The record gives the reactivity of an RNA of 177 nucleotides to 2A3. The reactions ran in a buffer of 150 mM KOAc, 10 mM MgCl2 and 150 mM bicine (pH 8.5), at 24 C. Reactivities are given for positions 27 through 126. The 2A3 profile rests on 1,226 reads. The data come from the RNA Mapping Database (RMDB), library OK1LIB.
RNA sequence: GGGAACGACUCGAGUAGAGUCGAAAACAUAAAAUACACCCAGGGGUAGCGCUCACCGUUGUCAGAACAGACGAGGUGCUAUCGGAAAACAUACUCUUUAGUGCCAGGGCAUCUACAUCCAUGUUUACGAUUACUGCCGAUUCGUCGGCAGUAAUCGAAAAGAAACAACAACAACAAC
Reactivity to 2A3 in 0.01 (KOAc 150mM, MgCl2 10mM, bicine 150mM(pH8.5), 24C), signal-to-noise 3, nucleotides 027 to 126: c030a000u220a110a200a010a030u200a090c000a080c000c020c030a030g050g030g000g000u010a000g000c000g010c010u000c030a060c060c040g020u030u100g070u100c070a050g100a230a030c030a020g040a010c060g000a030g020g040u040g000c000u010a010u020c000g040g050a020a180a000a000c090a040u200a140c080u090c000u100u090u110a050g060u020g000c010c030a030g000g000g000c010a040u000c010u050a020c000a060u060c030c000a040u060g040u010u080u090a030